Overview
The data come from the RNA Mapping Database (RMDB), library OK3TST. An RNA of 207 nucleotides, treated with 2A3 and DMS and read out base by base. For 2A3 the reverse transcriptase was SuperScript II with manganese. Conditions: 150 mM KOAc, 10 mM MgCl2 and 150 mM bicine (pH 8.5), 24 C.
RNA sequence: GGGAACGACUCGAGUAGAGUCGAAAAUUAAUGCUCCAAUAGAAGCAGUUCUUGAGGAUAGUAACCUCUUGUUAUACCCUAAGCUGCAAGGUAAGGUUCGUGCCAAGGCAUUUGACAUAAAUUCACUUGGGCAUAAGAUACUAGACGGUGAUAAAGCCAAAACCAGGAUGUUCGCAUCCUGGUUUUGAAAAGAAACAACAACAACAAC
Reactivity to 2A3 in 0.01 (KOAc 150mM, MgCl2 10mM, bicine 150mM(pH8.5), 24C), signal-to-noise 1, nucleotides 027 to 156: u040u050a060a060u050g000c040u020c120c030a050a040u130a180g030a080a000g000c000a040g020u100u110c010u030u060g000a000g000g030a020u030a210g170u060a090a150c000c000u020c000u010u030g060u130u100a080u070a080c000c020c000u000a000a060g000c060u020g000c060a120a150g050g010u170a040a060g000g050u040u010c030g040u040g030c020c000a000a000g040g000c040a050u030u050u070g110a140c040a050u260a040a200a130u140u050c080a110c120u020u020g150g030g000c000a000u010a050a060g040a020u020a080c000u020a050g140a110c060g040g000u130g060a020u240a090a220a010g110c000
Reactivity to DMS in 0.01 (KOAc 150mM, MgCl2 10mM, bicine 150mM(pH8.5), 24C), signal-to-noise 2, nucleotides 027 to 156: u000u020a040a050u000g020c010u000c040c010a130a180u010a170g030a080a050g000c000a030g010u020u010c040u010u000g010a070g000g070a110u000a190g000u000a090a100c020c020u000c020u000u000g010u000u000a120u000a060c030c000c020u020a100a170g050c010u000g010c000a140a130g000g020u000a070a100g010g000u000u000c030g030u010g020c040c010a020a050g000g030c200a160u020u010u000g020a060c050a170u000a000a030a030u000u000c040a050c000u000u000g050g020g000c020a080u000a070a120g020a150u010a040c020u010a070g000a140c030g000g020u000g000a080u010a040a070a150g020c020